[RMDB]
RNA sequence: GGGAACGACUCGAGUAGAGUCGAAAAUUGGCCAGUGAAAUAUACUUUGACUGGCUAAACCCAAGGACAGUGAGGUGGGGAAGAGGGUGCCAGAGGUUCAUUUUUAAUUGAUAACACUUAUAGAGCAAGCACUGUGCUGGGCACUUUAAGCACAUUGAUGUACAUCCCAUUUCGAUGGGAUGUACAUAAAAGAAACAACAACAACAAC
Reactivity to 2A3 in 0.01 (KOAc 150mM, MgCl2 10mM, bicine 150mM(pH8.5), 24C), signal-to-noise 2, nucleotides 027 to 156: u030u050g020g000c000c000a000g010u020g080a010a040a020u290a030u060a120c070u030u060u030g230a020c020u000g000g000c010u000a040a000a010c020c000c000a010a020g090g000a050c030a030g010u060g100a010g010g030u090g010g000g010g000a000a090g010a060g000g000g000u010g020c000c000a020g040a040g050g050u030u060c030a090u000u030u030u050u280a140a110u110u060g060a040u070a130a050c050a010c080u100u080a090u140a190g040a010g030c000a000a050g020c010a020c090u060g000u030g060c000u030g020g080g000c040a100c050u020u130u090a020a030g030c020a000c020a060u020u170g040
Reactivity to DMS in 0.01 (KOAc 150mM, MgCl2 10mM, bicine 150mM(pH8.5), 24C), signal-to-noise 1, nucleotides 027 to 156: u000u040g010g010c010c000a000g010u000g000a020a060a080u010a230u010a130c190u000u000u000g010a070c000u000g000g040c030u000a030a050a130c000c010c010a130a170g020g010a100c030a100g010u000g010a190g010g000u010g010g000g010g010a040a070g000a110g030g010g010u000g000c050c050a090g010a110g000g010u000u010c050a080u010u000u010u010u000a040a130u010u010g010a100u000a100a090c070a010c070u000u000a070u010a010g000a070g000c040a090a120g000c030a110c050u000g030u000g050c000u000g030g030g060c030a080c060u000u010u010a030a050g030c050a010c030a130u010u000g000
Conditions: 150 mM KOAc, 10 mM MgCl2 and 150 mM bicine (pH 8.5), 24 C.
An RNA of 207 nucleotides, treated with 2A3 and DMS and read out base by base.
2A3 adducts were read by reverse transcription with SuperScript II with manganese.
For DMS the reverse transcriptase was MarathonRT.
Reactivities are given for positions 27 through 156.